The record gives the reactivity of an RNA of 177 nucleotides to DMS and 2A3. The RNA was probed in 150 mM KOAc, 10 mM MgCl2 and 150 mM bicine (pH 8.5) at 24 C. It was measured as part of the RMDB libraries RFM100 and RFMREP.
RNA sequence: GGGAACGACUCGAGUAGAGUCGAAAAAUGCACACACAUUCAUGAAGAGAAGAGAAAUGGUGAGUGUUCCCAUUUGAGUGAGAACCACCCAGUGCAGGUAGCUGCUGUGAGCUUUGCAAUUACAAUUACGUUGGAUAAGGUUCGCCUUAUCCAACGUAAAAGAAACAACAACAACAAC
Reactivity to DMS in 0.01 (KOAc 150mM, MgCl2 10mM, bicine 150mM(pH8.5), 24C), signal-to-noise 2, nucleotides 027 to 126: a070u000g030c050a050c020a060c130a080c090a050u050u020c000a030u000g020a140a100g000a140g040a200a070g000a140g020a030a060a050u010g000g000u010g000a020g000u010g020u000u010c010c000c000a150u000u010u020g000a120g010u000g000a060g000a160a090c030c070a120c030c000c040a070g040u000g000c000a090g000g030u010a040g000c040u000g000c010u010g020u040g000a090g000c050u020u000u000g010c060a070a080u000u000a120c250a020a170u000u000
Reactivity to 2A3 in 0.01 (KOAc 150mM, MgCl2 10mM, bicine 150mM(pH8.5), 24C), signal-to-noise 3, nucleotides 027 to 126: a010u140g000c020a000c000a000c010a010c000a040u000u070c020a000u100g130a130a110g050a080g090a180a050g070a010g060a030a040a080u080g040g000u020g010a080g010u060g020u020u010c000c000c000a010u120u100u070g050a010g000u060g010a060g010a060a020c020c010a010c000c000c000a030g010u030g040c000a010g010g110u070a020g010c020u030g000c040u050g030u040g110a000g000c020u090u080u040g000c010a060a150u100u050a170c020a020a070u010u000